[RMDB]
RNA sequence: GGGAACGACUCGAGUAGAGUCGAAAAGACGCGGCAGACCUUCGAUAUCGCCAAACUCAAGUUUGUUAAAGCGAUAUUUACCACAGGCGAGGGUCAGGAUCAGGCAGUCAUCCGGCACGCUGGUGGACACCUAUGAUGACUUCGGUCAUCAUAGGUGAAAAGAAACAACAACAACAAC
Reactivity to 2A3 in 0.01 (KOAc 150mM, MgCl2 10mM, bicine 150mM(pH8.5), 24C), signal-to-noise 3, nucleotides 027 to 126: g030a010c030g020c010g010g020c020a020g010a060c010c000u040u040c020g010a010u000a010u000c000g000c010c000a040a010a010c070u160c240a210a170g040u030u030u030g080u070u140a110a030a020g000c000g000a000u000a020u030u090u080a110c040c010a030c030a140g010g000c030g030a050g020g020g020u000c020a040g000g010a060u060c040a020g160g000c030a020g030u040c000a040u020c000c000g030g010c050a030c040g030c000u080g020g030u010g010g020a030
Reactivity to DMS in 0.01 (KOAc 150mM, MgCl2 10mM, bicine 150mM(pH8.5), 24C), signal-to-noise 4, nucleotides 027 to 126: g010a100c070g010c040g020g020c020a160g000a030c030c030u000u010c040g000a060u000a000u000c000g030c010c020a050a030a030c020u010c280a190a200g010u000u000u000g020u010u000a030a050a100g050c010g000a010u000a010u000u010u000a160c080c060a040c150a080g000g010c030g010a070g020g010g010u000c010a080g000g020a070u000c080a100g010g020c040a050g000u000c100a040u000c040c010g010g000c050a040c100g020c040u000g020g020u010g010g010a220